Record summary: An RNA of 177 nucleotides, treated with 2A3 and DMS and read out base by base. For DMS, 6,743 sequencing reads were counted. The 2A3 profile rests on 9,317 reads. The data come from the RNA Mapping Database (RMDB), library TTRDES.
RNA sequence: GGGAACGACUCGAGUAGAGUCGAAAAGAUAUGGAGAUGUGUAGACAUGCGGCACUAUCGGAAACGAUAGGAUCGCAACAGCUACCAUCUCCUAAGUCAAAGCCAGCAGUGGUUCGCCACUGCUGGCCUAUGAGUACCACUUCGGUGGUACUCAUAGAAAAGAAACAACAACAACAAC
Reactivity to 2A3 in 0.01 (KOAc 150mM, MgCl2 10mM, bicine 150mM(pH8.5), 24C), signal-to-noise 4, nucleotides 027 to 126: g020a000u030a010u080g000g020a010g010a010u020g210u080g030u100a010g050a050c170a300u300g040c010g000g000c000a020c070u000a000u010c000g000g000a040a010a000c010g000a000u010a000g000g040a040u020c010g000c060a090a130c090a060g000c010u010a000c000c000a010u030c010u010c000c000u000a000a000g000u000c030a160a140a020g010c000c010a000g000c000a010g000u010g100g060u080u180c300g100c060c000a010c010u000g000c020u000g020g020c000
Reactivity to DMS in 0.01 (KOAc 150mM, MgCl2 10mM, bicine 150mM(pH8.5), 24C), signal-to-noise 6, nucleotides 027 to 126: g000a010u000a090u010g000g010a000g020a000u010g000u010g020u000a010g000a020c070a270u010g030c000g000g000c300a020c000u000a000u010c000g000g000a020a020a030c000g010a020u000a010g000g000a030u000c000g010c010a040a030c270a160g000c000u000a010c000c010a000u000c000u000c000c000u000a000a030g000u000c010a090a150a210g010c000c000a000g000c000a020g020u000g000g000u010u010c290g010c000c000a000c000u000g000c010u000g010g020c000